[RMDB]
RNA sequence: GGGAACGACUCGAGUAGAGUCGAAAAUAAUGAGAUGCACUUCGUCUACCACCACCAUGCCAAUGGUUUCCAGUUUGCCCUGCUCCAUCAGCUUGUUCACAAUGGAGUUCGCCUUCUCAAUUGUGCAGCGAUGGACUAUGUUCGCAUAGUCCAUCGCAAAAGAAACAACAACAACAAC
Reactivity to 2A3 in 0.01 (KOAc 150mM, MgCl2 10mM, bicine 150mM(pH8.5), 24C), signal-to-noise 2, nucleotides 027 to 126: u230a010a100u250g070a000g030a120u110g050c020a000c060u070u050c100g010u040c010u030a080c000c040a020c000c000a020c000c060a010u020g050c010c040a070a030u040g110g000u000u040u000c040c000a050g000u020u040u040g060c000c000c020u030g000c000u000c010c000a070u050c020a000g090c090u110u120g050u180u110c040a020c050a060a010u040g010g000a030g000u050u060c010g030c000c000u040u110c000u000c000a040a180u140u020g020u070g040c180a150